Chemical mapping of a 177-nucleotide RNA with 2A3 and DMS. DMS adducts were read by reverse transcription with MarathonRT. It was measured as part of the RMDB library TTRDEL. Reactivities are given for positions 27 through 126.

RNA sequence: GGGAACGACUCGAGUAGAGUCGAAAAGAUAUGGAGAGGAAGGAGUAGGCUUAGCUCGGAAACGAGCUCAAGCCGCAGAUACCUUCUACCCACCUCCUAAGUCAAAAGACGGGGUUCGCCCCGUCAAGUACUCUUAGCAGUUCGCUGCUAAGAGUACAAAAGAAACAACAACAACAAC
Reactivity to 2A3 in 0.01 (KOAc 150mM, MgCl2 10mM, bicine 150mM(pH8.5), 24C), signal-to-noise 1, nucleotides 027 to 126: g000a000u020a000u040g000g010a040g050a080g010g040a020a000g000g000a010g020u040a060g030g000c000u000u000a000g000c000u000c000g010g000a010a000a000c000g000a000g000c000u010c050a000a010g010c010c000g050c010a000g000a000u010a000c000c000u020u030c000u040a070c070c060c020a300c060c010u000c010c000u010a000a020g020u000c020a000a090a030a240g010a010c030g000g000g020g040u050u080c210g180c000c000c000c000g000u010c000a000a000
Reactivity to DMS in 0.01 (KOAc 150mM, MgCl2 10mM, bicine 150mM(pH8.5), 24C), signal-to-noise 3, nucleotides 027 to 126: g000a020u010a010u010g000g000a030g020a300g020g000a020a010g000g000a060g000u010a010g020g030c010u000u000a030g010c010u000c000g010g000a010a010a030c000g010a000g020c000u000c170a000a010g030c000c000g010c150a080g010a010u000a010c000c000u000u000c010u000a170c190c140c060a140c250c010u000c000c000u000a010a120g000u000c010a120a090a090a130g000a000c000g010g000g020g010u000u020c230g010c020c000c000c000g000u000c000a000a060